[RMDB]
RNA sequence: GGGAACGACUCGAGUAGAGUCGAAAACACCGGGUCUUCGGACCCGGUGAAAAGGAGCCAAAAUAACAACGGAAAGGGCAGACGGAGCCCAACUCUGUCAAAAAACUGAAGUCUUCGGACUUCAGAACCAAGAUAAGAUGUUCGCAUCUUAUCUUGGAAAAGAAACAACAACAACAAC
Reactivity to DMS in 0.01 (KOAc 150mM, MgCl2 10mM, bicine 150mM(pH8.5), 24C), signal-to-noise 2, nucleotides 027 to 126: c010a000c000c010g030g030g010u000c000u000u000c260g000g010a020c000c030c020g000g000u000g000a000a030a080a100g010g010a150g020c030c050a040a050a070a040u000a030a080c060a030a040c110g010g030a070a150a120g000g000g010c100a080g000a050c080g000g000a050g000c030c080c060a060a130c060u000c000u000g010u000c040a000a040a120a050a090a150c000u010g000a000a000g000u000c000u000u010c150g050g000a020c010u000u010c000a000g000a080a100
Reactivity to 2A3 in 0.01 (KOAc 150mM, MgCl2 10mM, bicine 150mM(pH8.5), 24C), signal-to-noise 1, nucleotides 027 to 126: c000a000c000c000g020g010g010u010c000u040u070c210g090g000a010c030c000c000g020g000u020g000a010a010a000a000g090g020a020g040c000c020a060a060a010a130u180a080a040c090a050a030c030g050g000a120a060a110g020g000g000c000a000g030a020c040g040g030a020g010c000c040c000a000a020c000u020c000u000g030u000c000a000a030a080a030a080a080c020u000g000a000a000g010u000c020u030u140c300g100g000a000c000u000u020c000a000g000a000a010
This 177-nucleotide RNA was probed chemically with DMS and 2A3. 2A3 adducts were read by reverse transcription with SuperScript II with manganese. The RNA was probed in 150 mM KOAc, 10 mM MgCl2 and 150 mM bicine (pH 8.5) at 24 C. The data come from the RNA Mapping Database (RMDB), library M2PK50. The 2A3 profile rests on 2,167 reads.